The record gives the reactivity of an RNA of 177 nucleotides to 2A3 and DMS. Source: RMDB library M2PK50, as collected in RNAgym.
RNA sequence: GGGAACGACUCGAGUAGAGUCGAAAACCCUGGUUAUUCGUAACCAGGGGUUGAGUGAAUCCUCUCAGUGCAACGGUGGAUCACACGAAACGCAUGGACGACAAUUACGGUUAUUCGUAACCGUAAACUCAUCUUUAGACUUCGGUCUAAAGAUGAGAAAAGAAACAACAACAACAAC
Reactivity to 2A3 in 0.01 (KOAc 150mM, MgCl2 10mM, bicine 150mM(pH8.5), 24C), signal-to-noise 5, nucleotides 027 to 126: c000c000c000u000g010g020u010u020a040u030u100c250g020u030a020a000c000c000a010g040g010g010g010u040u120g020a030g030u050g050a070a070u000c010c010u000c020u040c090a060g080u080g190c060a100a050c070g020g010u020g000g030a050u050c020a020c000a010c120g090a090a050a000c060g010c060a070u110g080g020a030c040g010a030c080a080a070u050u020a010c000g000g020u010u010a020u020u070c160g010u030a010a000c000c000g000u000a000a010a010
Reactivity to DMS in 0.01 (KOAc 150mM, MgCl2 10mM, bicine 150mM(pH8.5), 24C), signal-to-noise 5, nucleotides 027 to 126: c010c000c010u010g000g000u010u000a020u000u020c180g030u010a010a010c000c000a010g010g010g000g000u000u000g000a190g020u010g010a200a070u000c000c010u000c030u010c070a160g020u010g020c210a110a080c120g010g010u010g000g010a070u000c050a060c010a090c080g010a110a050a050c090g010c070a060u000g000g010a060c060g000a070c140a090a120u000u000a010c000g000g000u000u000a020u000u010c170g020u000a000a010c000c000g000u000a000a010a100
2A3 adducts were read by reverse transcription with SuperScript II with manganese. DMS (dimethyl sulfate) methylates the pairing face of unpaired adenines and cytosines. The reactions ran in a buffer of 150 mM KOAc, 10 mM MgCl2 and 150 mM bicine (pH 8.5), at 24 C.